[RMDB]
An RNA of 177 nucleotides, treated with DMS and 2A3 and read out base by base. The data come from the RNA Mapping Database (RMDB), library OK2TST. DMS (dimethyl sulfate) methylates the pairing face of unpaired adenines and cytosines. The RNA was probed in 150 mM KOAc, 10 mM MgCl2 and 150 mM bicine (pH 8.5) at 24 C.

RNA sequence: GGGAACGACUCGAGUAGAGUCGAAAAUCAGAUCUUUGAGGUGCACAAUCAUUUUGCGGCCAAGGGACCCGCCUAUCUGCCGCCUCAGGGUCAGGGUGCAAGUGGUCAUGCCAACGAUGAUAGCUUACUCAUUUAUCAGUUUCGACUGAUAAAUGAGAAAAGAAACAACAACAACAAC
Reactivity to DMS in 0.01 (KOAc 150mM, MgCl2 10mM, bicine 150mM(pH8.5), 24C), signal-to-noise 7, nucleotides 027 to 126: u000c070a120g010a040u010c040u000u000u000g020a060g000g030u000g000c090a070c140a090a060u020c130a080u000u000u000u000g000c050g010g010c050c100a120a110g000g010g000a080c160c020c030g020c030c080u000a050u010c110u000g010c100c030g020c020c040u000c040a050g000g000g000u000c020a090g000g020g020u000g010c070a040a070g020u010g000g000u000c030a060u000g010c030c040a070a090c130g000a060u000g010a080u010a110g020c070u000u000a190
Reactivity to 2A3 in 0.01 (KOAc 150mM, MgCl2 10mM, bicine 150mM(pH8.5), 24C), signal-to-noise 6, nucleotides 027 to 126: u060c010a020g030a070u020c050u120u150u150g030a030g000g000u060g000c050a020c040a130a140u090c070a130u070u160u150u150g020c010g010g000c030c020a100a100g090g000g030a050c010c020c000g040c000c040u110a130u050c050u050g070c060c030g000c020c000u020c030a020g050g000g010u030c030a020g040g020g010u060g020c020a060a050g030u030g040g000u040c010a030u080g000c010c010a030a030c080g040a020u080g030a040u070a050g010c030u030u030a040